[RMDB]
RNA sequence: GGGAACGACUCGAGUAGAGUCGAAAAGUCCGACUGGCGACAUCGUACAGUCGACUCGCCCGGACGAACCCGCUAUGCAUCGGCUUCCCCUCCGUGACGGCCGGGCGAUGUCUCUGGGUCCGGAAUCCCAUCUUGCUUGUUUCGACAAGCAAGAUGGAAAAGAAACAACAACAACAAC
Reactivity to DMS in 0.01 (KOAc 150mM, MgCl2 10mM, bicine 150mM(pH8.5), 24C), signal-to-noise 4, nucleotides 027 to 126: g000u010c060c010g000a070c050u000g010g010c020g010a190c290a160u000c020g020u010a150c060a050g000u000c060g000a040c090u000c020g000c030c010c010g010g020a040c030g000a110a100c040c020c040g010c100u000a080u010g010c100a070u000c060g000g000c120u000u010c030c000c010c110u000c020c030g010u000g000a200c040g000g010c020c020g000g010g020c010g000a050u000g010u000c010u000c060u000g030g030g010u000c050c030g020g010a150a110u010c050
Reactivity to 2A3 in 0.01 (KOAc 150mM, MgCl2 10mM, bicine 150mM(pH8.5), 24C), signal-to-noise 3, nucleotides 027 to 126: g020u120c100c020g000a020c060u040g000g020c020g070a120c050a180u110c070g150u080a300c010a060g020u020c010g010a020c000u010c010g030c020c020c010g010g000a010c010g030a020a060c000c030c020g000c050u180a170u250g030c030a060u070c020g090g000c010u120u090c010c010c000c010u040c020c000g030u020g040a050c010g000g020c030c000g010g000g000c020g030a050u110g030u010c020u020c020u100g060g000g010u050c040c000g000g050a020a020u050c010